[RMDB]
RNA sequence: GGGAACGACUCGAGUAGAGUCGAAAAGAAGGACAGGCAGUACUAGCCCUUUUCGAAGACUUCGCAAAGACAGAGGAUGGGAAACAGCUUGUAUCACUUAUGGGUAAGUUUAAUAGCUUCUGCCAAAAAUAAAUCUCAAAUUCGUUUGAGAUUUAUUAAAAGAAACAACAACAACAAC
Reactivity to 2A3 in 0.01 (KOAc 150mM, MgCl2 10mM, bicine 150mM(pH8.5), 24C), signal-to-noise 3, nucleotides 027 to 126: g050a010a010g040g030a000c030a030g010g020c010a000g010u030a060c070u040a050g050c020c000c000u020u080u050u040c020g060a050a030g060a070c030u050u030c090g020c130a190a090a020g040a020c040a010g050a010g070g010a030u050g020g000g030a010a140a030c020a010g030c010u010u050g040u040a070u120c030a040c100u090u070a050u190g050g020g030u040a060a030g010u060u030u140a110a110u080a050g040c030u040u020c020u030g070c000c000a010a110a000
Reactivity to DMS in 0.01 (KOAc 150mM, MgCl2 10mM, bicine 150mM(pH8.5), 24C), signal-to-noise 7, nucleotides 027 to 126: g010a070a060g010g010a060c090a080g000g020c030a090g030u000a100c090u010a120g010c030c020c020u000u000u000u000c030g010a220a130g000a100c070u000u010c180g000c140a080a080a080g010a070c060a050g010a190g000g000a050u000g000g010g000a070a050a060c080a110g010c040u000u000g010u000a070u000c120a070c100u020u000a050u010g000g010g010u000a050a070g000u000u000u000a060a100u010a080g000c040u000u000c040u000g010c020c030a020a080a080
Source information: Structure probing data (2A3 and DMS) for a 177-nucleotide construct. The reactions ran in a buffer of 150 mM KOAc, 10 mM MgCl2 and 150 mM bicine (pH 8.5), at 24 C. For 2A3 the reverse transcriptase was SuperScript II with manganese. Values cover nucleotides 27 to 126. High 2A3 reactivity points to a flexible backbone, as in loops and unpaired stretches. The DMS profile rests on 7,523 reads. Values are in units of 0.01, from 0 to 300, in steps of 10.